Source information
Chemical mapping of a 207-nucleotide RNA with 2A3 and DMS. For DMS the reverse transcriptase was MarathonRT. It was measured as part of the RMDB library M2RFPK.
[RMDB]
RNA sequence: GGGAACGACUCGAGUAGAGUCGAAAAACGAGGUACGCGUCGAAAAUAUGACCGGUGUCAUAGCCUCUAGCACACAGAGGUCGCGUGGGUUCAACUCCCCCCCUUUUCCGAGGGUAUCGGAAACCAAAAAACACAAUUUGGUUCGCCAAAUUGUGAACAUUGUACUCUCCUUCGGGAGAGUACAAUGAAAAGAAACAACAACAACAAC
Reactivity to 2A3 in 0.01 (KOAc 150mM, MgCl2 10mM, bicine 150mM(pH8.5), 24C), signal-to-noise 5, nucleotides 027 to 156: a000c060g010a020g030g090u110a020c000g010c010g000u130c070g070a080a020a020a050u040a010u020g020a020c050c180g160g100u260g020u100c000a000u010a010g010c000c000u010c000u020a080g050c100a030c010a020c020a140g010a000g000g020u020c000g000c010g010u020g000g060g010u050u080c030a060a060c060u040c000c000c000c000c000c000c000u020u070u030u000c000c000g000a000g020g000g000u120a020u010c000g000g010a000a010a010c020c020a070a030a030a030a050a000c000a000c000a010a000u000u000u000g030g000u010u030c120g050c030c000a000a000a000u000u000g000u000g000a010a010
Reactivity to DMS in 0.01 (KOAc 150mM, MgCl2 10mM, bicine 150mM(pH8.5), 24C), signal-to-noise 2, nucleotides 027 to 156: a080c030g030a130g010g010u000a060c030g010c010g030u000c070g000a100a050a030a130u010a030u000g000a030c030c050g010g010u000g040u010c000a050u000a010g000c030c000u010c010u010a160g060c110a120c120a130c060a060g020a040g020g040u000c020g020c030g040u000g010g030g020u000u000c010a110a300c040u000c010c000c000c000c020c000c020u000u010u000u000c010c020g000a050g000g010g080u000a110u000c030g000g010a040a030a090c120c050a020a040a030a070a080a170c000a030c010a010a020u000u000u000g000g020u000u000c300g020c000c000a010a020a010u000u000g010u010g010a080a110